Chemical mapping of a 207-nucleotide RNA with DMS and 2A3. DMS adducts were read by reverse transcription with MarathonRT. For DMS, 6,245 sequencing reads were counted.
[RMDB]
RNA sequence: GGGAACGACUCGAGUAGAGUCGAAAACUCACUUCGGUGAGCUGUAAGCGUACUACAUGCACAUAUAAGCGUUGAAAUCAUGAACUACCGUUCCCAAAUAGGAACGGCAUGAUGGAGCUUAUAGUGCAUGUAUCGCCUCUUUCGAUUUCGAUCGAAACCAAAAUGAGCAAUUCGUUGCUCAUUUUGGAAAAGAAACAACAACAACAAC
Reactivity to DMS in 0.01 (KOAc 150mM, MgCl2 10mM, bicine 150mM(pH8.5), 24C), signal-to-noise 2, nucleotides 027 to 156: c000u000c000a020c000u000u010c270g070g020u000g030a020g070c000u020g010u000a070a070g030c020g030u000a070c100u010a030c000a000u020g030c000a010c000a160u010a020u010a020a010g010c000g000u000u000g010a120a120a040u000c010a030u000g000a120a110c030u000a110c000c000g010u000u020c000c000c000a020a140a230u020a050g000g030a020a020c000g010g000c000a020u010g000a040u010g000g000a280g010c000u000u000a000u000a030g010u020g010c000a020u010g010u000a020u000c020g010c010c000u000c050u000u000u000c000g000a080u000u000u000c110g000a100u010c020g000a060a120a250
Reactivity to 2A3 in 0.01 (KOAc 150mM, MgCl2 10mM, bicine 150mM(pH8.5), 24C), signal-to-noise 7, nucleotides 027 to 156: c000u010c000a000c000u050u070c280g140g000u010g000a020g010c040u150g180u200a110a030g000c030g040u080a120c060u000a010c030a000u000g010c000a000c070a030u020a000u000a010a010g020c050g220u300u080g030a020a010a000u000c000a000u010g050a100a110c090u120a080c300c000g000u000u010c000c010c040a150a220a080u300a070g000g000a000a000c000g000g000c000a000u010g000a000u000g030g010a010g000c000u000u000a000u000a000g000u000g000c000a000u000g000u000a000u010c010g000c000c000u070c030u030u020u010c010g000a000u090u100u100c090g040a030u020c010g020a030a020a040